[RMDB]
Chemical mapping of a 207-nucleotide RNA with DMS and 2A3. For 2A3 the reverse transcriptase was SuperScript II with manganese. For DMS the reverse transcriptase was MarathonRT. It was measured as part of the RMDB library OK3TST.
RNA sequence: GGGAACGACUCGAGUAGAGUCGAAAAACAACAGAUAGCUGGAACCAGCGUAGAAUUCUACGCAUAUCCAUAGCGAAUGGUACCUGUAAAGAAAAUAAUGAUGUAUGUACAAGUACCAACAGACAUCAAUGCCAUGGUGAUGUCAAUCACAUAUGCACUGAUAUCCUGGGUUCGCCCAGGAUAUCAGAAAAGAAACAACAACAACAAC
Reactivity to DMS in 0.01 (KOAc 150mM, MgCl2 10mM, bicine 150mM(pH8.5), 24C), signal-to-noise 1, nucleotides 027 to 156: a130c030a100a120c000a090g040a080u000a080g020c060u000g010g010a050a170c110c090a180g010c000g040u010a060g000a190a180u000u000c000u000a000c000g000c010a000u010a060u000c000c030a150u000a060g000c060g030a190a160u000g010g040u000a010c000c000u000g030u000a040a090a010g010a120a040a050a100u000a170a070u000g010a150u000g020u000a050u000g010u000a030c020a050a020g040u000a070c010c000a040a140c040a060g010a040c010a040u000c020a070a170u000g020c020c100a090u060g030g050u020g010a040u000g010u000c140a040a100u010c060a060c010a030u010a040u010g020c100a170
Reactivity to 2A3 in 0.01 (KOAc 150mM, MgCl2 10mM, bicine 150mM(pH8.5), 24C), signal-to-noise 5, nucleotides 027 to 156: a000c030a010a000c020a020g080a080u110a070g000c010u020g020g020a100a160c060c010a070g010c000g000u010a010g030a240a290u300u080c000u000a000c010g010c000a000u040a020u090c020c000a030u090a020g010c010g070a090a090u050g000g000u010a010c010c010u000g020u040a050a060a070g190a050a150a030a000u200a030a100u130g110a050u070g070u090a030u050g030u010a010c010a000a020g000u000a040c000c000a010a030c010a030g030a010c000a010u010c000a040a040u120g040c030c060a060u060g040g010u030g020a000u030g060u040c020a030a060u100c020a040c010a040u140a060u160g060c020a030